[RMDB]
RNA sequence: GGGAACGACUCGAGUAGAGUCGAAAAUGCUGUGCACUACUUAGUACGCGCGUAGUUGCAGGCAUUCCGGGUGCAGCAACUGACGCGGAAGACUUUUCCCAGAGUGUGCGCUUCAACUGGCGUGCUGCAGAUGGUCGGCUUUCGAGCCGACCAUCUGAAAAGAAACAACAACAACAAC
Reactivity to 2A3 in 0.01 (KOAc 150mM, MgCl2 10mM, bicine 150mM(pH8.5), 24C), signal-to-noise 1, nucleotides 027 to 126: u090g040c010u070g000u000g140c000a000c050u110a040c030u170u080a000g010u030a010c000g010c000g180c000g050u000a010g000u010u080g000c000a010g060g010c020a000u060u030c000c080g050g040g000u010g070c020a020g000c000a000a020c020u030g140a140c050g000c010g110g020a100a000g120a110c000u000u000u000u060c000c000c000a050g000a000g010u040g000u000g010c000g000c000u100u110c050a100a100c090u070g030g000c030g000u000g000c000u000g000